[RMDB]
RNA sequence: GGGAACGACUCGAGUAGAGUCGAAAACAAGGUUCGCCUUGCCAGGAUCCUAAGUCUUAGCGGGAGCACAGGCAAUUGCGAAGAACGCUCGGAAACGAGCGGGAGCAAGCCUGUGCAUCGAUCGCUAAGAUAUGGAGCAUUUGAUCUUCGGAUCAAAGCAUAAUUGCUCGUUCGCGAGCAAUUAUGCAAAAGAAACAACAACAACAAC
Reactivity to 2A3 in 0.01 (KOAc 150mM, MgCl2 10mM, bicine 150mM(pH8.5), 24C), signal-to-noise 1, nucleotides 027 to 156: c030a010a000g010g010u100u210c260g190c020c000u040u030g150c060c090a140g080g110a090u020c000c020u040a130a050g040u000c000u000u000a000g000c000g010g010g030a010g000c000a000c000a000g050g080c110a250a280u060u030g030c020g170a200a010g000a030a000c000g010c000u000c000g020g050a040a070a030c000g000a000g000c030g000g000g000a010g000c040a030a000g300c000c000u000g000u000g000c080a010u000c000g060a040u080c000g000c000u000a020a020g000a000u000a000u010g000g020a040g010c110a220u000u000u100g000a000u000c060u020u050c180g120g030a000u000c050a000a030a130
Structure probing data (2A3) for a 207-nucleotide construct.
Values cover nucleotides 27 to 156.
For 2A3, 800 sequencing reads were counted.
The reactions ran in a buffer of 150 mM KOAc, 10 mM MgCl2 and 150 mM bicine (pH 8.5), at 24 C.